[RMDB]
RNA sequence: GGGAACGACUCGAGUAGAGUCGAAAAUUCAAUAUGCAUACGGAGUAUACGGAGUACUAGCGACGUCUGCAUAUACCCAGCCCCUUCCAAUACAUGUCGCUGGGCCCUCUUCCUGCGGAUGAAGGCAGCCGCUAGACCCUCUCUCGAACUACCAGGCUCAGUUGUAGGUGUUCGCACCUACAACUGAAAAAGAAACAACAACAACAAC
Reactivity to 2A3 in 0.01 (KOAc 150mM, MgCl2 10mM, bicine 150mM(pH8.5), 24C), signal-to-noise 1, nucleotides 027 to 156: u030u000c050a010a080u040a100u140g050c000a000u040a090c110g030g000a010g030u010a040u010a260c080g000g040a120g040u030a120c030u000a020g000c010g140a150c030g170u090c060u000g010c000a010u070a010u050a150c000c050c000a050g000c070c070c020c020u170u000c030c050a060a110u130a180c120a100u170g130u130c000g000c030u000g000g000g000c090c000c000u000c000u050u130c050c020u040g100c050g000g110a130u020g030a100a070g050g010c020a000g020c020c000g030c040u000a070g050a130c000c050c000u010c000u000c000u020c010g090a050a020c040u180a140c020c100a010g170g010c010
The record gives the reactivity of an RNA of 207 nucleotides to 2A3. It was measured as part of the RMDB library OK3TST.